[RMDB]
RNA sequence: GGGAACGACUCGAGUAGAGUCGAAAACUGUUUACUGGACGAAUUGUAGAUAAAUUUUCCGUGAGCCAUAUCAAUUGGAAUCUAAUCGCAUUAUUUGGUGGUAUCUUUGUCAUCAAUGCUUUAUUAAAGCACCAAAUGCAUUCGUGCAUUUGGUGCUAAAAGAAACAACAACAACAAC
Reactivity to 2A3 in 0.01 (KOAc 150mM, MgCl2 10mM, bicine 150mM(pH8.5), 24C), signal-to-noise 2, nucleotides 027 to 126: c000u020g110u100u070u110a060c060u000g200g030a000c000g080a060a130u050u050g070u010a000g000a100u100a000a070a040u030u030u030u020c000c080g050u000g130a000g000c000c020a040u010a040u050c100a250a070u000u180g010g000a180a000u010c050u040a110a010u110c000g050c110a080u000u160a130u130u240u110g000g000u040g000g000u110a030u050c120u120u300u070g060u000c000a000u000c000a040a070u000g000c050u300u080u250a060u200u090a200a220
Overview
Structure probing data (2A3) for a 177-nucleotide construct. The reactions ran in a buffer of 150 mM KOAc, 10 mM MgCl2 and 150 mM bicine (pH 8.5), at 24 C. It was measured as part of the RMDB library OK1LIB. Reactivities are rounded to 0.1 and cut off at 0 and 3.